[RMDB]
RNA sequence: GGGAACGACUCGAGUAGAGUCGAAAAGAUAUGGACCGUACAGGAGGCAGUCGGAAACGACUGUCCCGCGAAACUGUGACGGUCCUAAGUCAAAACUUGGGGCGUAUCUUCGGAUACGCCCCAAGAACUAGCUUACUACGUUCGCGUAGUAAGCUAGAAAAGAAACAACAACAACAAC
Reactivity to DMS in 0.01 (KOAc 150mM, MgCl2 10mM, bicine 150mM(pH8.5), 24C), signal-to-noise 2, nucleotides 027 to 126: g000a050u000a300u000g010g000a010c020c010g020u000a040c010a010g000g020a070g010g020c000a000g010u000c010g000g000a090a100a130c020g010a040c000u010g000u010c010c010c020g020c120g000a090a070a300c020u000g000u000g010a020c020g000g010u000c000c000u000a010a060g000u000c020a090a100a070a100c010u000u000g000g000g000g020c000g020u000a000u000c000u000u010c190g000g020a000u010a000c000g000c000c000c000c000a000a000g000a020a170